Chemical mapping of a 177-nucleotide RNA with DMS and 2A3. The DMS profile rests on 2,207 reads. Source: RMDB library OK1LIB, as collected in RNAgym.
RNA sequence: GGGAACGACUCGAGUAGAGUCGAAAAAGGGUUUGAUAAAGAGGAUAAUGAAUUACGUAAGAAAAUAGUGGUUAUAAAUGAUCAAGUAGCAAAAACUGUAUUCAAUAAUAAUGCUAUUGGUAAAUCGACGUCCCUUAAGUUUCGACUUAAGGGACGUAAAAGAAACAACAACAACAAC
Reactivity to DMS in 0.01 (KOAc 150mM, MgCl2 10mM, bicine 150mM(pH8.5), 24C), signal-to-noise 2, nucleotides 027 to 126: a060g000g010g010u020u000u050g000a200u020a010a130a090g010a010g020g000a080u020a060a080u050g010a070a150u030u020a050c150g000u010a110a040g010a070a050a010a020u030a000g000u010g060g040u000u020a050u000a010a150a040u030g000a030u000c100a090a060g000u010a090g000c090a080a070a080a050a050c140u000g040u050a070u020u040c020a010a030u000a030a000u010a040a020u000g000c000u000a040u010u000g020g020u000a030a070a010u010c150g010
Reactivity to 2A3 in 0.01 (KOAc 150mM, MgCl2 10mM, bicine 150mM(pH8.5), 24C), signal-to-noise 2, nucleotides 027 to 126: a000g050g030g000u070u100u050g130a200u020a100a070a000g170a010g050g020a010u030a080a070u100g240a050a050u110u080a050c060g030u100a060a040g080a080a050a060a000u080a120g000u000g160g000u000u040a010u040a090a120a060u000g000a020u040c010a000a060g000u000a090g040c030a020a000a050a110a000c070u040g000u030a110u110u030c050a020a070u050a090a000u010a050a030u040g030c000u000a000u050u040g040g000u030a090a000a020u070c000g080
For 2A3 the reverse transcriptase was SuperScript II with manganese.